Source: RMDB library OK2TRN, as collected in RNAgym. The record gives the reactivity of an RNA of 177 nucleotides to DMS. The RNA was probed in 150 mM KOAc, 10 mM MgCl2 and 150 mM bicine (pH 8.5) at 24 C. Reactivities are rounded to 0.1 and cut off at 0 and 3.
RNA sequence: GGGAACGACUCGAGUAGAGUCGAAAAAUCCAGGGCCCCUCCUGGUGUGGCUGCCUCUCACUGGAUGUCCCCUGCCUGUCCUCUCCCCUGCAGUGCAGUGGAAGCUGCGGGCAAGGCCGCACCAUCACGGCUUAGAGAAUUUCGAUUCUCUAAGCCGAAAAGAAACAACAACAACAAC
Reactivity to DMS in 0.01 (KOAc 150mM, MgCl2 10mM, bicine 150mM(pH8.5), 24C), signal-to-noise 2, nucleotides 027 to 126: a090u000c000c010a080g000g030g010c000c020c030c040u000c120c120u010g020g000u010g030u010g000g000c010u000g020c090c040u020c090u000c070a160c090u020g010g030a070u010g010u000c010c000c030c190u000g000c010c010u000g000u010c300c060u000c110u010c010c010c010c080u000g000c020a100g000u010g040c000a020g040u000g000g000a040a100g000c120u000g020c250g010g000g000c020a100a120g000g000c010c020g010c020a030c030c020a040u000c140a120